This 177-nucleotide RNA was probed chemically with DMS. The RNA was probed in 150 mM KOAc, 10 mM MgCl2 and 150 mM bicine (pH 8.5) at 24 C. DMS adducts were read by reverse transcription with MarathonRT. It was measured as part of the RMDB library OK2TRN. For DMS, 3,621 sequencing reads were counted.
RNA sequence: GGGAACGACUCGAGUAGAGUCGAAAAAGUCAAAAAUCAGUUGGCCAAGCUGGGUGUGGUGGUGCACACCUGUAAUCCCAGGUACCCUGGAGACUGAGGUGAGAAGAUUGCUUGAGCCUAGGAGUUGAAUAACGCAACGAUUCGUCGUUGCGUUAUUAAAAGAAACAACAACAACAAC
Reactivity to DMS in 0.01 (KOAc 150mM, MgCl2 10mM, bicine 150mM(pH8.5), 24C), signal-to-noise 3, nucleotides 027 to 126: a080g000u020c050a000a070a070a140a060u010c030a050g000u020u000g020g020c030c030a050a070g000c050u000g010g000g010u010g020u010g000g010u010g010g010u020g000c130a100c030a020c000c000u010g020u010a050a100u000c020c010c000a060g020g000u000a110c100c050c050u000g000g020a300g000a080c030u000g000a030g000g010u000g000a130g000a090a110g000a110u000u000g010c030u000u000g000a070g010c010c020u010a070g000g010a100g000u010u010g010